[RMDB]
RNA sequence: GGGAACGACUCGAGUAGAGUCGAAAACAAGACUCGUAUUCUAAUUACUAUCGGUUGAUGACAUACGAAUCUAUUAAGAACCGAGGCAAAAACAGUACUGAUACCAUUCGUGAAAACGGCUUAAAAAUCCCUUAAUGUAGUUCGCUACAUUAAGGGAAAAAGAAACAACAACAACAAC
Reactivity to 2A3 in 0.01 (KOAc 150mM, MgCl2 10mM, bicine 150mM(pH8.5), 24C), signal-to-noise 4, nucleotides 027 to 126: c020a010a010g030a020c010u010c020g010u010a030u080u030c040u110a080a100u150u090a060c030u090a110u210c050g080g000u030u040g030a080u070g040a030c010a100u050a030c020g010a040a010u010c030u050a110u120u120a140a060g050a070a000c030c020g020a000g020g030c030a030a020a030a060a050c020a010g030u050a050c040u050g020a020u060a120c010c010a060u040u100c020g020u020g060a040a010a010a030c020g060g000c010u060u080a040a070a040a190a090
Reactivity to DMS in 0.01 (KOAc 150mM, MgCl2 10mM, bicine 150mM(pH8.5), 24C), signal-to-noise 5, nucleotides 027 to 126: c100a100a030g020a030c030u000c020g020u010a010u010u000c050u000a090a140u000u000a060c040u000a110u010c120g010g010u000u000g010a090u000g000a070c300a020u000a020c030g010a030a030u000c030u000a090u000u010a080a110g000a090a060c050c010g000a060g000g010c070a050a040a070a060a030c090a070g010u000a060c080u010g000a050u000a050c070c040a090u000u010c060g010u000g000a080a050a100a070c060g010g000c190u000u000a020a050a060a070a130